[RMDB]
RNA sequence: GGGAACGACUCGAGUAGAGUCGAAAACCCUGGUUAUUCGUAACCAGGGGUUGAGUGAAUCCUCUCAGUGCAUCGGUGGAUCACACGUAACGCAUGGACGACAAUUACGGUUAUUCGUAACCGUAAAGGCCUUUAUGUCAUUCGUGACAUAAAGGCCAAAAGAAACAACAACAACAAC
Reactivity to DMS in 0.01 (KOAc 150mM, MgCl2 10mM, bicine 150mM(pH8.5), 24C), signal-to-noise 1, nucleotides 027 to 126: c000c000c000u000g020g010u000u000a010u000u000c250g010u000a000a000c000c010a000g000g000g010g010u000u000g000a150g020u020g030a170a110u000c020c150u000c040u000c120a100g000u000g000c080a070u000c080g000g030u000g020g010a100u020c080a050c030a050c090g050u000a050a070c150g000c050a090u020g010g000a060c080g030a070c100a050a070u000u000a000c000g030g000u000u000a020u000u000c210g020u000a000a000c000c000g000u000a000a060a060
Reactivity to 2A3 in 0.01 (KOAc 150mM, MgCl2 10mM, bicine 150mM(pH8.5), 24C), signal-to-noise 1, nucleotides 027 to 126: c000c020c020u000g000g000u010u000a080u060u090c250g000u010a000a000c000c000a000g000g000g030g000u100u150g000a020g020u080g010a060a110u040c020c000u030c010u030c080a020g070u070g210c010a100u090c080g000g000u050g000g000a020u010c020a000c000a000c090g080u070a090a010c030g000c040a050u150g040g070a040c050g020a030c040a010a140u070u020a000c020g030g000u000u030a010u040u110c170g000u000a000a030c020c030g020u020a000a010a020
Record summary
This 177-nucleotide RNA was probed chemically with DMS and 2A3. Values cover nucleotides 27 to 126. The reactions ran in a buffer of 150 mM KOAc, 10 mM MgCl2 and 150 mM bicine (pH 8.5), at 24 C.